Source: RMDB library M2RFPK, as collected in RNAgym. An RNA of 207 nucleotides, treated with DMS and 2A3 and read out base by base. 2A3 adducts were read by reverse transcription with SuperScript II with manganese. Reactivities are given for positions 27 through 156. The reactions ran in a buffer of 150 mM KOAc, 10 mM MgCl2 and 150 mM bicine (pH 8.5), at 24 C. DMS (dimethyl sulfate) methylates the pairing face of unpaired adenines and cytosines.
RNA sequence: GGGAACGACUCGAGUAGAGUCGAAAAUAAGCAAAAGACAACAACCUUUCCCGCUGACAAUAGCGUUAUCCCUCUGCACUUCGGUAAUAUGAGGGCACAGUAAAUCCCGCAAGGAUGAGAAUGUGAUUAAACAGUUACAGCUUCGGCUGUAACUGAACAACGCAACAACGUUCGCGUUGUUGCGUUGAAAAGAAACAACAACAACAAC
Reactivity to DMS in 0.01 (KOAc 150mM, MgCl2 10mM, bicine 150mM(pH8.5), 24C), signal-to-noise 1, nucleotides 027 to 156: u000a100a090g070c110a040a060a040a030g020a240c070a030a170c090a060a250c080c060u000u040u000c000c040c010g000c010u000g000a110c120a100a100u000a020g060c090g000u030u000a060u010c000c010c000u020c020u000g030c110a040c050u000u000c130g000g000u000a120a180u000a180u000g000a030g060g000g110c020a040c040a140g060u010a080a050a090u000c000c010c000g000c120a090a160g020g010a020u020g000a030g000a090a120u000g000u000g020a150u000u000a150a190a220c040a030g020u000u000a010c000a010g000c000u000u000c300g010g020c000u000g030u000a000a000c000u020g000a000a080
Reactivity to 2A3 in 0.01 (KOAc 150mM, MgCl2 10mM, bicine 150mM(pH8.5), 24C), signal-to-noise 2, nucleotides 027 to 156: u150a020a000g080c080a040a000a150a060g190a130c050a130a020c050a070a120c070c000u000u030u030c040c030c010g000c050u050g060a060c110a150a170u070a100g060c050g090u130u100a100u130c010c010c000u000c000u040g000c030a040c050u060u060c190g040g000u070a010a030u130a110u300g000a000g010g020g000c000a000c000a000g000u010a000a040a040u000c010c000c010g100c100a050a000g020g000a010u000g000a010g010a040a000u010g000u000g010a000u030u270a080a140a040c030a010g000u000u000a000c000a000g030c000u090u100c220g060g000c000u000g000u000a020a000c000u000g000a010a020